Source information
The record gives the reactivity of an RNA of 207 nucleotides to DMS and 2A3. Reactivities are given for positions 27 through 156.
[RMDB]
RNA sequence: GGGAACGACUCGAGUAGAGUCGAAAAGUAAUAGAUACUUGGAUGACGAGAAAGGGUGCGCUGAUAUCCAGGACGAAUGCUAGCAGUAAAUAGAAUAGCGCUCCUAAUACAACUAGCAACAAAAGGAUAAGGUAUCGUGAUGUCAAUCACAUUGCGAGGUAAUAAUGCGGUUCGCCGCAUUAUUACCAAAAGAAACAACAACAACAAC
Reactivity to DMS in 0.01 (KOAc 150mM, MgCl2 10mM, bicine 150mM(pH8.5), 24C), signal-to-noise 2, nucleotides 027 to 156: g030u000a110a070u010a100g000a140u000a070c020u000u010g000g030a200u010g000a150c040g020a100g010a140a090a110g010g050g060u000g020c020g040c020u000g000a130u000a090u000c000c050a130g000g020a160c080g070a130a060u000g000c000u000a010g010c020a150g040u000a020a080a080u000a120g010a080a070u010a100g050c070g000c030u000c030c060u010a040a190u000a040c040a060a050c020u000a010g010c010a020a160c060a050a050a110a120g000g000a090u020a100a040g010g010u000a100u000c010g060u030g030a020u000g020u000c040a120a140u010c120a120c000a060u000u010g000c020g000a050
Reactivity to 2A3 in 0.01 (KOAc 150mM, MgCl2 10mM, bicine 150mM(pH8.5), 24C), signal-to-noise 4, nucleotides 027 to 156: g030u030a020a140u050a140g070a030u100a120c020u020u030g040g020a030u090g060a040c070g030a040g050a100a080a040g040g020g020u070g020c020g000c020u010g030a050u010a030u160c020c030a010g030g040a020c090g050a140a040u060g000c040u010a000g000c060a010g040u100a020a060a120u120a090g080a080a130u020a030g020c020g010c010u020c000c010u060a080a030u070a030c010a020a040c010u010a000g010c000a020a060c020a040a120a040a010g040g020a020u060a060a040g050g010u120a040u070c000g000u000g000a010u040g040u060c070a050a100u120c010a040c000a010u020u030g000c010g020a050
For DMS the reverse transcriptase was MarathonRT. The data come from the RNA Mapping Database (RMDB), library OK3TST. The RNA was probed in 150 mM KOAc, 10 mM MgCl2 and 150 mM bicine (pH 8.5) at 24 C.